[RMDB]
RNA sequence: GGGAACGACUCGAGUAGAGUCGAAAAGCUGUGCCUCCUGAUUGCUGAGUGUUCACCUGGACCUUCUGACUACCUUCCCUGUGCUAUUCCAUCAGCCUACAGACCUGGUACCUGGAUUUUUGCCCGAGAUGAUUCCUACCACCUUACUACUGACGAAGACACCCAUUCCAGUGGACCACUGUGACCCAGGAGGCAUUCAGCCAUCAUGAUGUGGCCUUUACCUCCACUCCUGUCUUGUUCUACCCAGAUUCAGCACAGCCCUUUAAAUUAGGAGUUUCGACUCCUAAAAAAGAAACAACAACAACAAC
Reactivity to DMS in 0.01 (KOAc 150mM, MgCl2 10mM, bicine 150mM(pH8.5), 24C), signal-to-noise 7, nucleotides 027 to 266: g000c100u010g020u000g010c010c010u000c020c030u000g010a150u000u000g010c040u010g000a080g030u010g010u000u000c020a060c100c030u000g000g010a120c300c040u010u010c030u000g000a140c110u010a100c060c060u000u000c030c030c020u000g000u000g010c040u000a080u010u010c070c060a100u020c070a080g010c050c040u000a090c080a070g010a120c100c080u000g010g010u000a060c090c060u000g010g000a070u000u010u010u010u000g010c040c030c030g000a090g010a060u010g000a130u000u000c010c010u000a110c120c070a060c070c050u000u010a070c090u010a070c100u010g010a070c090g010a070a060g010a090c100a070c040c020c040a120u010u000c020c010a030g020u010g010g010a040c060c030a100c040u000g010u000g000a060c180c080c010a020g010g010a070g000g010c010a000u000u010c050a050g030c000c060a050u010c070a090u010g010a070u010g020u000g000g010c070c030u000u010u000a090c050c020u000c020c010a070c040u000c020c020u000g010u000c030u010u010g010u000u000c040u000a100c060c040c040a060g000a110u000u000c060a060g010c030a040c050a070g000c030c040c010u000u010u000a030a060a130
Reactivity to 2A3 in 0.01 (KOAc 150mM, MgCl2 10mM, bicine 150mM(pH8.5), 24C), signal-to-noise 6, nucleotides 027 to 266: g030c020u020g010u030g020c000c010u030c010c010u030g020a060u050u100g000c020u050g060a070g060u110g010u050u080c050a060c060c070u020g010g010a030c000c010u080u050c040u050g090a090c070u090a090c020c020u030u050c010c020c010u030g030u040g030c020u080a090u130u070c020c010a080u060c050a060g040c010c020u050a040c020a070g100a100c010c040u040g010g020u040a040c010c010u060g090g100a170u060u060u050u090u200g060c020c010c020g070a050g010a050u110g020a040u050u080c010c000u040a090c000c040a070c020c010u070u120a060c020u050a020c000u040g050a020c030g020a040a000g040a010c020a060c030c030c010a040u040u050c000c000a010g010u040g010g020a010c000c020a030c080u020g030u040g090a050c010c070c010a000g000g010a000g040g000c000a000u010u010c000a010g000c000c000a060u080c020a020u090g100a050u150g040u050g060g040c010c000u050u090u080a080c010c010u020c010c010a020c020u030c010c010u040g050u060c010u080u100g070u080u030c030u050a110c010c010c000a040g030a120u090u090c020a010g030c030a020c010a030g060c020c000c000u090u190u220a110a070a050